Annotation
Structure probing data (DMS and 2A3) for a 177-nucleotide construct. The reactions ran in a buffer of 150 mM KOAc, 10 mM MgCl2 and 150 mM bicine (pH 8.5), at 24 C. Reactivities are given for positions 27 through 126. 2A3 adducts were read by reverse transcription with SuperScript II with manganese. The 2A3 profile rests on 4,463 reads. It was measured as part of the RMDB library OK2TST. The DMS profile rests on 11,141 reads.
[RMDB]
RNA sequence: GGGAACGACUCGAGUAGAGUCGAAAAUACAGAAAGGAGCACGUCCAGACAUUUGCUGACCAGGGCCUCUCAGAGGGGCCGGUGUAUGGCAGGAGGGUCGCAGCUGAGGGGCCUUUCUGUGGAGGGCGCGAAAUAUUAGAUUCGUCUAAUAUUUCGCAAAAGAAACAACAACAACAAC
Reactivity to DMS in 0.01 (KOAc 150mM, MgCl2 10mM, bicine 150mM(pH8.5), 24C), signal-to-noise 6, nucleotides 027 to 126: u010a070c040a050g000a040a050a060g010g010a070g000c040a100c080g010u010c030c040a110g010a140c090a110u010u010u000g010c020u000g000a110c070c050a140g010g020g010c000c000u000c010u000c130a080g010a160g000g010g000g010c010c000g000g000u010g010u010a070u010g000g010c040a050g000g000a150g010g000g010u000c010g020c080a080g020c020u010g000a070g000g000g000g010c000c000u000u000u000c010u010g010u010g010g000a110g000g010g020c300
Reactivity to 2A3 in 0.01 (KOAc 150mM, MgCl2 10mM, bicine 150mM(pH8.5), 24C), signal-to-noise 3, nucleotides 027 to 126: u160a000c010a020g050a010a050a010g020g000a030g030c020a010c070g050u000c030c020a010g130a100c030a140u170u170u130g030c020u040g020a070c000c030a030g030g050g010c020c000u010c000u020c060a060g050a120g120g030g000g000c020c020g000g010u070g000u050a220u100g040g000c030a030g000g060a050g040g030g020u080c020g000c100a070g000c030u050g020a080g000g000g000g000c000c000u000u030u000c000u020g010u020g020g040a040g020g040g040c070